Chemical mapping of a 177-nucleotide RNA with 2A3 and DMS.
DMS adducts were read by reverse transcription with MarathonRT.
DMS (dimethyl sulfate) methylates the pairing face of unpaired adenines and cytosines.
RNA sequence: GGGAACGACUCGAGUAGAGUCGAAAAGAUAUGGACGUCCAUUGGCCAGCAACAGCGGAGCUCGGAAACGAGCUCCGACAUGCUGGAUGUGACGUCCUAAGUCAAAGCAUUCACUUCGGUGAAUGCACUACUAAUUCAACUUCGGUUGAAUUAGUAGAAAAGAAACAACAACAACAAC
Reactivity to 2A3 in 0.01 (KOAc 150mM, MgCl2 10mM, bicine 150mM(pH8.5), 24C), signal-to-noise 8, nucleotides 027 to 126: g030a010u080a060u170g010g000a000c010g000u020c020c030a040u060u280g300g080c020c000a010g010c010a040a130c040a180g110c010g010g000a000g000c000u010c000g020g030a060a070a040c010g010a000g000c000u010c000c010g000a020c000a010u090g000c000u010g010g010a010u020g020u100g000a010c000g000u000c000c000u000a030a000g010u010c050a050a110a040g000c000a000u000u000c010a010c030u040u150c300g140g000u010g000a000a010u000g000c000a000
Reactivity to DMS in 0.01 (KOAc 150mM, MgCl2 10mM, bicine 150mM(pH8.5), 24C), signal-to-noise 8, nucleotides 027 to 126: g010a050u000a300u000g000g000a010c000g010u000c000c020a110u010u010g040g030c010c010a010g010c010a040a130c300a170g020c000g000g000a010g010c000u000c000g010g010a080a100a230c000g010a010g000c000u000c000c010g000a010c090a130u000g010c000u000g000g010a020u000g010u010g010a010c000g000u000c000c000u000a010a090g000u000c030a090a110a130g010c010a010u000u000c000a010c000u000u010c220g030g020u000g000a010a010u000g010c010a080
Overview: Conditions: 150 mM KOAc, 10 mM MgCl2 and 150 mM bicine (pH 8.5), 24 C.